This 177-nucleotide RNA was probed chemically with DMS and 2A3.
2A3 adducts were read by reverse transcription with SuperScript II with manganese.

RNA sequence: GGGAACGACUCGAGUAGAGUCGAAAAUAGACUUGGGAGAGAACAAUUGUGAUACCCAAAUCACUCUAUGUCUCGAAUAGUGUACGCUAUAGAGUGAUAUGGAUGUAGCGUACAUUCUCAUUCAAGAGAUUGUUAGCUGAUUCGUCAGUUGGCAAUCAAAAGAAACAACAACAACAAC
Reactivity to DMS in 0.01 (KOAc 150mM, MgCl2 10mM, bicine 150mM(pH8.5), 24C), signal-to-noise 9, nucleotides 027 to 126: u030a080g010a090c070u000u000g010g000g010a100g000a050g010a300a040c050a120a070u020u020g000u000g000a110u030a060c050c030c030a060a070a040u010c010a030c040u000c020u000a060u010g010u000c020u000c050g010a110a090u040a070g010u000g000u010a010c000g010c020u000a010u010a020g000a120g010u030g010a090u030a060u030g000g010a100u010g000u000a030g000c000g010u000a010c060a050u010u010c070u000c080a080u020u000c020a030a050g000a250
Reactivity to 2A3 in 0.01 (KOAc 150mM, MgCl2 10mM, bicine 150mM(pH8.5), 24C), signal-to-noise 9, nucleotides 027 to 126: u160a010g090a040c040u020u030g020g030g000a080g010a000g020a090a030c030a090a140u100u080g020u020g010a030u110a120c020c020c000a060a140a010u020c010a010c010u000c010u020a130u100g050u000c020u020c070g070a100a080u080a130g040u030g010u040a010c010g000c010u010a010u010a020g080a050g100u140g110a100u080a100u210g130g020a030u070g010u010a000g000c000g000u000a000c010a010u020u000c010u010c010a100u130u050c030a060a020g030a010